RNA sequence: GGGAACGACUCGAGUAGAGUCGAAAAGAUAUGGACCUUACAGGGAGCUCCUAUUCGGAAACGAAUAUGAGCGUUGAUCUGUUGGGUCCUAAGUCAAAAGUACAUCGUCCUUCGGGACGAUGUACAACCCUAUUCACAUGUUCGCAUGUGAAUAGGGAAAAGAAACAACAACAACAAC
Reactivity to 2A3 in 0.01 (KOAc 150mM, MgCl2 10mM, bicine 150mM(pH8.5), 24C), signal-to-noise 1, nucleotides 027 to 126: g000a000u020a000u040g000g000a000c000c000u010u010a000c010a010g040g030g030a020g020c000u000c000c010u000a010u000u000c000g020g010a010a010a000c000g010a000a010u010a010u030g010a000g020c000g030u100u060g010a040u010c010u000g010u000u050g010g010g000u000c000c010u000a000a000g000u000c000a020a030a070a120g000u000a000c000a000u000c000g010u020c010c000u020u120c260g060g030g000a000c000g000a000u000g000u000a010c000a000a000
Reactivity to DMS in 0.01 (KOAc 150mM, MgCl2 10mM, bicine 150mM(pH8.5), 24C), signal-to-noise 2, nucleotides 027 to 126: g000a010u000a040u020g000g010a010c000c000u010u000a010c000a010g020g010g000a020g020c000u000c000c070u000a020u000u000c000g000g020a020a000a010c000g020a010a000u000a000u000g000a010g010c000g030u010u010g000a060u000c000u000g000u000u000g020g010g020u000c010c000u000a000a050g010u000c000a100a130a130a180g010u010a000c010a000u000c000g010u000c000c000u000u010c240g050g010g000a020c010g000a000u000g010u000a010c000a070a130

This 177-nucleotide RNA was probed chemically with 2A3 and DMS. Reactivities are rounded to 0.1 and cut off at 0 and 3. It was measured as part of the RMDB library TTRDES. The RNA was probed in 150 mM KOAc, 10 mM MgCl2 and 150 mM bicine (pH 8.5) at 24 C. 2A3 adducts were read by reverse transcription with SuperScript II with manganese.